[RMDB]
RNA sequence: GGGAACGACUCGAGUAGAGUCGAAAAGACACAGCGUGAUCAGCUCACAGAGCUAGAGAUAAACACUUUGUUUCCAAUGAACAAAGAGUAUGAGCAUGUGAAGGACAUCCUGGCCACAUAUAUGUCCAAAGAGGGUCAAAACGUGCAGGGUCGAAGGCACCCUACUACCAUUCGUGGUAGUAGGGUGAAAAGAAACAACAACAACAAC
Reactivity to DMS in 0.01 (KOAc 150mM, MgCl2 10mM, bicine 150mM(pH8.5), 24C), signal-to-noise 2, nucleotides 027 to 156: g010a060c000a080c050a160g030c070g040u010g030a120u000c030a080g020c020u010c010a100c020a120g000a200g030c030u000a060g000a110g020a090u010a080a070a070c060a110c000u020u000u010g020u000u000u000c040c260a140a170u020g010a010a020c020a020a040a040g020a110g040u000a160u010g040a040g030c010a060u000g010u000g030a070a150g020g010a050c040a090u020c090c030u010g010g000c000c050a060c080a110u000a100u010a070u000g000u000c010c060a050a050a110g000a100g050g050g000u000c040a010a040a050a050c040g040u010g010c000a090g000g040g030u000c020g010a100a090g010g010
Reactivity to 2A3 in 0.01 (KOAc 150mM, MgCl2 10mM, bicine 150mM(pH8.5), 24C), signal-to-noise 4, nucleotides 027 to 156: g050a000c040a010c010a040g020c030g070u060g030a070u080c050a030g020c010u020c030a200c090a090g050a030g040c030u080a060g010a020g020a140u170a120a170a000c050a000c050u010u010u000g030u020u060u080c150c120a110a140u300g010a010a010c000a000a000a010g030a010g020u090a060u180g050a030g020c020a060u030g000u010g090a040a120g050g000a020c010a010u040c020c030u020g030g010c070c000a020c030a010u120a010u030a000u140g030u010c000c000a000a090a010g100a040g030g030g020u050c030a060a060a040a040c030g020u030g000c020a020g010g040g020u060c060g030a030a010g060g000